[RMDB]
RNA sequence: GGGAACGACUCGAGUAGAGUCGAAAAGCCGACAACUUUUUUAUGUUCAGGUUUAGCUGUGUGAUAAAUUGCAAGUGCGGCACCACAUAAGCCGAACAUCAUCGUAAUAAAACGGCCUGACAUAAAGAUCGCAGAUGGUAUUCGUACCAUCUGCGAUAAAAGAAACAACAACAACAAC
Reactivity to 2A3 in 0.01 (KOAc 150mM, MgCl2 10mM, bicine 150mM(pH8.5), 24C), signal-to-noise 4, nucleotides 027 to 126: g100c020c010g110a120c050a140a180c100u110u160u000u000u000u010a020u020g020u070u080c020a010g010g010u000u080u170a040g020c050u040g020u040g040u010g220a130u140a230a210a090u080u180g030c020a120a070g040u050g110c030g000g030c030a080c100c000a050c010a060u120a060a120g000c020c030g030a060a060c000a050u110c020a000u060c020g140u050a100a120u090a130a200a030a010c000g000g000c000c000u000g010a000c000a000u010a000a000a000g080
Reactivity to DMS in 0.01 (KOAc 150mM, MgCl2 10mM, bicine 150mM(pH8.5), 24C), signal-to-noise 1, nucleotides 027 to 126: g040c030c030g000a270c290a200a000c020u070u010u000u000u060u000a000u010g000u160u000c000a000g030g000u000u000u000a160g000c070u000g000u020g000u000g000a000u000a040a000a270u060u020g000c070a020a110g000u070g000c100g000g000c020a160c300c080a140c210a090u010a000a110g010c000c000g020a020a130c290a030u000c130a020u000c090g040u000a080a220u000a010a070a080a000c040g000g040c040c000u000g000a010c000a000u020a000a000a030g000
Annotation:
The record gives the reactivity of an RNA of 177 nucleotides to 2A3 and DMS. For 2A3 the reverse transcriptase was SuperScript II with manganese. The RNA was probed in 150 mM KOAc, 10 mM MgCl2 and 150 mM bicine (pH 8.5) at 24 C.